[RMDB]
RNA sequence: GGGAACGACUCGAGUAGAGUCGAAAAGUCGCAAACCGUAAGGAGUCAUCCAUGAAGACAGGCACCGCGACGACGCGGCGCAGGCUGUUGGCAGUACUGAUCGCCCUCGCGUUGCCGGGGGCCGCCGGUCAGCGUCGGUGUUCGCACCGACGCUGACAAAAGAAACAACAACAACAAC
Reactivity to 2A3 in 0.01 (KOAc 150mM, MgCl2 10mM, bicine 150mM(pH8.5), 24C), signal-to-noise 1, nucleotides 027 to 126: g020u000c010g020c140a000a130a160c020c080g300u300a110a110g030g000a020g090u260c120a100u000c170c000a080u110g070a000a020g030a070c020a020g120g000c000a020c070c000g050c000g080a020c000g000a040c130g000c050g050g010c040g060c040a000g000g000c000u020g220u300u290g120g010c000a000g000u210a220c050u000g010a080u230c020g000c010c020c000u000c080g000c010g100u110u220g000c040c040g000g000g000g000g000c050c090g070c000c000g000
Background
An RNA of 177 nucleotides, treated with 2A3 and read out base by base. Values cover nucleotides 27 to 126. As a SHAPE reagent, 2A3 marks flexible, mostly unpaired nucleotides at the ribose 2'-OH. 2A3 adducts were read by reverse transcription with SuperScript II with manganese. The RNA was probed in 150 mM KOAc, 10 mM MgCl2 and 150 mM bicine (pH 8.5) at 24 C.